The data come from the RNA Mapping Database (RMDB), library OK1LIB. This 177-nucleotide RNA was probed chemically with DMS and 2A3. The reactions ran in a buffer of 150 mM KOAc, 10 mM MgCl2 and 150 mM bicine (pH 8.5), at 24 C. Reactivities are given for positions 27 through 126. The DMS profile rests on 5,281 reads. The 2A3 profile rests on 6,044 reads. Values are in units of 0.01, from 0 to 300, in steps of 10. 2A3 adducts were read by reverse transcription with SuperScript II with manganese.
RNA sequence: GGGAACGACUCGAGUAGAGUCGAAAAUGGGGUCGGAGCAGGAGGCGAAGACCGCAUCGCACGAGGUGGUGCACCUGCUCAAGCGCAUGGACGCGCUGCCAUGCUGAUUUGCACCAUCAUCAGGACCCACGCGAGUGGUAUUCGUACCACUCGCGUGAAAAGAAACAACAACAACAAC
Reactivity to DMS in 0.01 (KOAc 150mM, MgCl2 10mM, bicine 150mM(pH8.5), 24C), signal-to-noise 5, nucleotides 027 to 126: u000g000g000g000g020u000c000g000g000a300g030c050a170g020g010a180g030g020c030g000a250a220g000a060c020c000g000c020a010u000c130g020c150a150c190g000a040g000g020u000g000g000u000g010c000a030c300c030u000g000c030u010c160a100a040g010c080g010c000a060u010g000g010a140c100g000c090g000c050u020g000c130c150a010u010g000c010u020g020a100u030u010u010g000c000a010c030c000a030u000c010a080u000c160a180g000g000a180c030c010
Reactivity to 2A3 in 0.01 (KOAc 150mM, MgCl2 10mM, bicine 150mM(pH8.5), 24C), signal-to-noise 6, nucleotides 027 to 126: u080g010g020g000g020u010c020g020g030a010g010c030a070g090g300a080g160g150c010g000a020a020g010a030c000c010g020c000a040u050c040g060c030a060c100g010a020g030g000u010g010g010u010g010c010a040c000c020u070g010c030u050c120a060a020g030c020g020c030a070u140g100g040a070c080g050c050g010c200u100g010c030c020a040u050g000c000u060g030a240u070u060u110g000c000a000c010c000a000u010c000a070u010c010a000g040g040a030c000c010